[RMDB]
RNA sequence: GGGAACGACUCGAGUAGAGUCGAAAACAGUGUCGGGCCACAGGUUUUGUGCCAUUAGCGUGCAGUGCAGCCCGGACAAAAGACACGCCCCAGGAGGACUGGGAAAAGCGCGCUCUUCGGAGCGCGCCUGUUAAGGAUAGUUCGCUAUCCUUAACAGAAAAGAAACAACAACAACAAC
Reactivity to 2A3 in 0.01 (KOAc 150mM, MgCl2 10mM, bicine 150mM(pH8.5), 24C), signal-to-noise 2, nucleotides 027 to 126: c020a020g020u010g000u040c000g020g020g020c010c010a010c000a030g110g050u150u260u300u090g000u000g020c000c010a030u030u040a010g020c020g000u000g000c000a010g030u010g010c000a000g000c020c000c000g000g000a020c060a000a070a000a000g080a010c000a000c010g000c000c000c000c000a010g020g010a040g050g160a040c010u010g000g020g000a040a130a030a000g000c000g020c010g000c010u010c000u060u070c240g080g010a000g030c030g010c000g020c010
Reactivity to DMS in 0.01 (KOAc 150mM, MgCl2 10mM, bicine 150mM(pH8.5), 24C), signal-to-noise 3, nucleotides 027 to 126: c040a120g000u000g000u000c020g010g000g000c010c000a000c020a040g000g010u010u010u010u000g040u000g010c030c000a020u000u000a120g020c020g010u000g010c010a300g010u000g000c020a060g010c020c010c000g000g000a040c240a040a040a040a010g020a170c010a020c020g010c000c000c000c000a020g000g020a170g010g000a240c000u000g000g000g010a030a030a050a110g010c000g010c010g020c000u010c000u000u020c220g030g020a010g010c000g020c000g010c000